[RMDB]
RNA sequence: GGGAACGACUCGAGUAGAGUCGAAAAACAGAAAAAAGGAGUUUAAAUUAGAUUUGCAAACGGACGGUACUAAAUACCGUCACUUUUACGUCUAACUUAUCGUUAACUCUGCAAAGAGAAAACAAGAAAAACAAGCGUGAGUUCGCUCACGCUUGAACAUAUAUCAUGACUUCGGUCAUGAUAUAUGAAAAGAAACAACAACAACAAC
Reactivity to 2A3 in 0.01 (KOAc 150mM, MgCl2 10mM, bicine 150mM(pH8.5), 24C), signal-to-noise 4, nucleotides 027 to 156: a000c040a020g130a040a080a010a010a010a040g070g020a050g010u150u120u130a060a080a070u040u040a020g020a030u050u080u210g040c040a020a030a040c050g010g000a000c010g000g000u030a030c060u220a060a100a080u050a010c000c000g000u000c000a040c000u000u000u010u050a010c010g010u000c010u020a030a040c010u060u080a060u140c030g050u020u070a020a020c000u000c010u000g010c060a070a110a000g040a020g020a030a040a010a020c060a040a060g110a100a080a030a010a010c000a010a000g000c000g020u000g000a010g010u060u120c220g030c080u000c000a000c000g000c000u000u000g000a000a000
Reactivity to DMS in 0.01 (KOAc 150mM, MgCl2 10mM, bicine 150mM(pH8.5), 24C), signal-to-noise 2, nucleotides 027 to 156: a110c050a250g010a030a010a080a100a110a130g030g010a110g010u010u000u010a020a010a020u000u020a010g000a050u010u010u010g100c030a000a040a010c140g000g030a020c010g010g020u010a050c000u020a050a020a300u000a000c010c000g010u010c000a030c000u000u010u010u000a000c010g010u000c010u000a000a020c000u000u000a080u010c170g000u000u000a040a060c030u000c000u000g000c120a050a140a120g010a130g000a050a040a040a090c060a080a060g000a070a100a130a070a130c010a030a010g010c010g060u000g010a050g010u000u010c300g020c030u000c000a020c000g020c010u000u000g000a030a090
Structure probing data (2A3 and DMS) for a 207-nucleotide construct. For DMS, 3,487 sequencing reads were counted. Conditions: 150 mM KOAc, 10 mM MgCl2 and 150 mM bicine (pH 8.5), 24 C. The data come from the RNA Mapping Database (RMDB), library M2RFOK.